[RMDB]
The record gives the reactivity of an RNA of 207 nucleotides to 2A3 and DMS. The data come from the RNA Mapping Database (RMDB), library RNAMAK. For 2A3 the reverse transcriptase was SuperScript II with manganese. Conditions: 150 mM KOAc, 10 mM MgCl2 and 150 mM bicine (pH 8.5), 24 C.
RNA sequence: GGGAACGACUCGAGUAGAGUCGAAAAUUGUCUUUCGAGACAAGAAAAGGGGUCUAAUCGGGAGGUUAGCUUUUGACGAGCUGAAGCCUCCACGGCUCGAUAAGCUGUCCAUCGAUCGAUUAGACGGAGGCACCCGUCUUCCACGUUUCGACGUGAACUUAACGAAUCUUUUCGAAGAUUCGUUAAGAAAAGAAACAACAACAACAAC
Reactivity to 2A3 in 0.01 (KOAc 150mM, MgCl2 10mM, bicine 150mM(pH8.5), 24C), signal-to-noise 6, nucleotides 027 to 156: u030u010g010u000c020u030u110u150c300g110a030g000a010c010a020a000g120a040a130a010a020g150g030g060g000u000c000u010a000a000u010c000g000g020g010a040g010g050u160u230a000g000c020u040u080u140u210g210a110c060g000a000g000c000u010g010a060a010g000c000c000u000c000c010a000c010g000g000c000u000c030g020a050u030a110a020g000c010u060g090u280c080c060a150u300c030g000a010u030c000g000a000u000u010a000g010a000c000g000g000a000g000g000c000a020c000c000c000g040u020c050u100u020c090c010a020c020g020u050u110u150c210g080a030c020g020u040g050a050a040
Reactivity to DMS in 0.01 (KOAc 150mM, MgCl2 10mM, bicine 150mM(pH8.5), 24C), signal-to-noise 3, nucleotides 027 to 156: u000u000g010u000c000u000u000u010c170g000a080g050a050c010a020a080g010a060a060a110a120g010g000g040g030u010c010u000a000a020u000c020g020g000g010a100g060g050u010u000a030g030c010u000u000u010u010g030a220c140g020a000g000c010u000g000a070a080g030c000c010u000c000c010a130c050g010g000c000u000c000g010a090u000a040a070g070c020u000g010u000c030c030a230u000c140g010a200u020c030g000a080u010u010a030g000a010c000g010g000a040g140g070c010a150c030c020c040g010u000c030u000u000c040c020a040c060g000u000u000u000c170g010a070c000g000u000g010a130a210